The record gives the reactivity of an RNA of 177 nucleotides to DMS and 2A3.
RNA sequence: GGGAACGACUCGAGUAGAGUCGAAAAAAGUAUCUGCCUGCCGAGAUGAAGAGGGAGAUUGCCCGCAAGAACAUCCGAGUCUAUGCCGUCAACGCAAAUAAGGUCGCGCAGUCGGUCGGCCUUGGCGACGCGUCUACCUAUUCGUAGGUAGACGCGUAAAAGAAACAACAACAACAAC
Reactivity to DMS in 0.01 (KOAc 150mM, MgCl2 10mM, bicine 150mM(pH8.5), 24C), signal-to-noise 3, nucleotides 027 to 126: a040a060g010u000a030u000c030u000g000c030c020u010g030c030c050g000a130g000a100u010g020a130a110g000a100g000g000g020a070g010a080u010u020g000c020c020c020g030c140a090a070g010a080a040c060a070u010c070c040g000a080g000u010c030u000a100u020g010c020c000g010u000c070a030a150c060g030c040a070a070a110u010a040a030g010g030u000c030g030c100g000c090a140g020u000c100g020g000u010c080g030g000c010c010u000u000g010g000c050g020
Reactivity to 2A3 in 0.01 (KOAc 150mM, MgCl2 10mM, bicine 150mM(pH8.5), 24C), signal-to-noise 2, nucleotides 027 to 126: a000a010g100u090a050u030c000u050g090c020c010u040g060c020c030g130a110g010a180u120g040a070a080g020a040g050g020g040a030g040a010u020u090g040c010c030c020g000c050a050a050g070a120a030c020a060u040c060c050g020a020g060u010c010u020a090u100g040c040c010g040u040c030a050a040c020g010c020a100a080a100u130a110a020g050g000u030c030g010c010g020c080a040g070u130c040g030g030u050c010g010g020c000c000u000u030g020g030c000g030

Annotation:
The RNA was probed in 150 mM KOAc, 10 mM MgCl2 and 150 mM bicine (pH 8.5) at 24 C. It was measured as part of the RMDB library OK2TST.